Chemical mapping of a 177-nucleotide RNA with DMS and 2A3. Values cover nucleotides 27 to 126. The data come from the RNA Mapping Database (RMDB), library OK2TRN. For DMS, 807 sequencing reads were counted. For DMS the reverse transcriptase was MarathonRT. 2A3 adducts were read by reverse transcription with SuperScript II with manganese.

RNA sequence: GGGAACGACUCGAGUAGAGUCGAAAAGAAGGUCCUCCAGUUCCAGGAUCUCACCGGCAUCGAGGAUAUGAACGUCUGCCGCGACGUCCUAAUCAGACACCAAUGGGAUCUCGAGGUGGCCUUCCAGCUUAUGCGUCCACUUCGGUGGACGCAUAAGAAAAGAAACAACAACAACAAC
Reactivity to DMS in 0.01 (KOAc 150mM, MgCl2 10mM, bicine 150mM(pH8.5), 24C), signal-to-noise 1, nucleotides 027 to 126: g000a050a010g020g000u010c020c050u000c000c050a210g040u000u000c110c050a260g000g000a000u000c000u000c000a010c140c020g020g000c050a080u050c020g020a300g000g010a050u000a030u000g030a080a010c020g000u000c000u000g000c300c130g020c090g030a030c030g010u000c020c020u010a160a080u000c020a100g020a120c100a170c000c000a070a090u010g000g010g000a040u000c020u000c040g010a130g000g040u000g010g000c020c010u000u010c050c110a080g010
Reactivity to 2A3 in 0.01 (KOAc 150mM, MgCl2 10mM, bicine 150mM(pH8.5), 24C), signal-to-noise 1, nucleotides 027 to 126: g010a000a000g030g040u180c030c030u030c080c060a020g070u060u030c050c030a010g040g000a010u000c000u020c010a030c000c070g020g040c030a060u070c040g090a090g080g060a090u060a040u270g060a040a020c000g010u020c050u130g160c070c040g060c140g030a020c030g020u000c030c000u050a110a050u050c030a010g040a060c040a000c040c040a060a120u080g020g000g010a010u030c060u090c060g030a070g010g000u060g060g050c000c000u040u000c000c000a010g010